[RMDB]
RNA sequence: GGGAACGACUCGAGUAGAGUCGAAAAUCAGUAAAACUGCGAUGAUUUAGUCUGGCUGUGUAGAUAACUACGUGAAAAUGUAGCUAAGGGAAGGCAGAAUAAGACGCAGGACUAUCAGUUAGUUGGUAGAAUAGAUUUUCUUCGGAAAAUCUAUUCUAAAAGAAACAACAACAACAAC
Reactivity to 2A3 in 0.01 (KOAc 150mM, MgCl2 10mM, bicine 150mM(pH8.5), 24C), signal-to-noise 1, nucleotides 027 to 126: u090c000a000g070u070a010a100a060a110c020u030g010c020g150a180u130g050a070u060u000u140a030g020u000c010u000g160g150c020u020g020u020g050u180a000g050a230u070a040a050c010u010a000c030g070u050g120a110a040a030a020u110g000u030a000g000c040u050a050a070g090g000g050a010a010g050g060c010a030g010a010a020u080a070a000g070a020c000g000c000a000g000g070a040c040u090a110u240c080a040g020u010u100a030g000u010u020g030g040u010
Reactivity to DMS in 0.01 (KOAc 150mM, MgCl2 10mM, bicine 150mM(pH8.5), 24C), signal-to-noise 2, nucleotides 027 to 126: u020c060a120g000u010a080a050a170a120c010u000g010c010g030a140u020g040a070u020u020u010a040g020u000c020u000g030g010c010u030g030u020g000u000a040g000a060u020a060a200c000u000a000c000g000u000g000a090a080a210a000u000g000u020a020g010c000u010a100a230g000g000g000a120a070g000g030c010a100g000a030a010u000a040a070g010a060c040g010c020a030g000g000a120c060u000a080u000c070a070g000u000u010a100g000u000u000g000g010u020